[RMDB]
Notes:
This 177-nucleotide RNA was probed chemically with DMS and 2A3. For 2A3, 2,622 sequencing reads were counted. Source: RMDB library OK2TST, as collected in RNAgym. The RNA was probed in 150 mM KOAc, 10 mM MgCl2 and 150 mM bicine (pH 8.5) at 24 C.
RNA sequence: GGGAACGACUCGAGUAGAGUCGAAAAAUCAUUUGAAGGAUUUCAUUAGGUAAAGUGGACAUUUCUCAAACUUAAAUUUGUAUUUAAGUUUGAAAAUUAAUUUUCGAUCAUCGAACGAAUUCCGUCCUAUACAGAUCAGAUUCGUCUGAUCUGUAUAAAAAGAAACAACAACAACAAC
Reactivity to DMS in 0.01 (KOAc 150mM, MgCl2 10mM, bicine 150mM(pH8.5), 24C), signal-to-noise 3, nucleotides 027 to 126: a080u020c060a090u000u000u000g020a120a220g020g000a070u000u000u000c050a040u000u000a130g010g020u010a050a060a080g000u000g000g000a080c120a040u000u000u000c130u000c000a000a000a000c000u000u000a000a010a010u000u020u010g000u010a050u000u000u000a000a010g000u000u000u000g000a000a020a010a020u000u000a060a060u000u000u000u000c010g010a090u000c070a090u000c010g000a050a070c090g000a050a070u000u000c030c020g000u000c050c060
Reactivity to 2A3 in 0.01 (KOAc 150mM, MgCl2 10mM, bicine 150mM(pH8.5), 24C), signal-to-noise 2, nucleotides 027 to 126: a020u040c010a010u040u070u130g080a070a060g090g010a010u020u090u070c030a040u070u130a020g080g000u070a070a070a120g030u060g000g020a010c030a030u020u040u020c090u000c000a000a000a010c000u030u020a020a010a010u230u170u210g080u080a050u000u030u000a010a010g000u020u030u000g000a020a010a010a000u030u060a030a040u000u030u050u030c000g020a020u080c010a030u010c040g020a040a050c030g000a010a010u050u050c030c020g020u010c000c010